[RMDB]
RNA sequence: GGGAACGACUCGAGUAGAGUCGAAAAGCUGGCGAGUUCACGCCGCCCGCGUGGUGGAACGACAUUCUGACUGCUGAGCGGCCCGUGGUCCUCGUCACGCAGGGCACGCUGGCGACCCGGCCUGAGCGUCUCCAGUCAUUUUCGAAUGACUGGAGACAAAAGAAACAACAACAACAAC
Reactivity to 2A3 in 0.01 (KOAc 150mM, MgCl2 10mM, bicine 150mM(pH8.5), 24C), signal-to-noise 2, nucleotides 027 to 126: g000c010u000g010g010c010g020a020g070u160u170c050a020c100g010c040c010g000c010c000c000g060c010g010u060g080g000u060g010g060a070a060c070g080a050c080a260u130u080c030u080g130a100c010u030g010c020u100g070a050g080c040g000g000c010c020c030g000u020g040g020u080c010c030u040c020g030u040c030a010c060g040c030a090g000g030g000c040a030c020g040c030u030g000g000c030g000a020c000c000c000g000g040c010c050u150g060a020g060c050
Reactivity to DMS in 0.01 (KOAc 150mM, MgCl2 10mM, bicine 150mM(pH8.5), 24C), signal-to-noise 2, nucleotides 027 to 126: g020c040u000g030g020c000g020a180g010u010u010c030a050c060g030c040c100g000c070c010c010g020c030g010u000g020g010u000g000g010a050a090c120g020a090c100a300u000u000c090u000g010a150c030u000g000c030u000g000a060g020c030g020g000c030c100c070g000u000g000g000u000c090c030u010c010g000u000c000a000c050g020c060a150g000g010g000c020a080c060g010c030u000g000g000c020g010a120c200c010c030g000g000c000c030u000g010a080g020c110
This 177-nucleotide RNA was probed chemically with 2A3 and DMS. The DMS profile rests on 1,808 reads. It was measured as part of the RMDB library OK2TRN. As a SHAPE reagent, 2A3 marks flexible, mostly unpaired nucleotides at the ribose 2'-OH. Conditions: 150 mM KOAc, 10 mM MgCl2 and 150 mM bicine (pH 8.5), 24 C.